An RNA of 177 nucleotides, treated with 2A3 and read out base by base. 2A3 adducts were read by reverse transcription with SuperScript II with manganese. It was measured as part of the RMDB library OK1LIB. Reactivities are rounded to 0.1 and cut off at 0 and 3.
RNA sequence: GGGAACGACUCGAGUAGAGUCGAAAAGAUGACCUCGCCUUCCGUCGGGAAAGGCCGCGUUGCGCAAUUGAUCAGCGCCAAAUCCAGCCGCUGCUCCUCAAUGCGCUUCUUCAGCUGGAUACACAUAACGUGCGCGAUGAUUCGUCAUCGCGCACGUAAAAGAAACAACAACAACAAC
Reactivity to 2A3 in 0.01 (KOAc 150mM, MgCl2 10mM, bicine 150mM(pH8.5), 24C), signal-to-noise 2, nucleotides 027 to 126: g010a040u140g060a080c000c010u020c070g050c000c000u000u010c110c040g190u070c090g020g010g020a100a160a060g010g020c000c010g030c090g030u100u080g000c010g020c000a110a180u080u140g020a070u050c000a000g000c000g000c010c060a000a160a000u000c050c020a000g030c030c000g000c000u020g000c000u130c030c000u130c030a100a160u160g000c060g000c000u060u020c030u070u140c020a020g000c000u000g000g000a000u070a000c100a000c000a000u300a300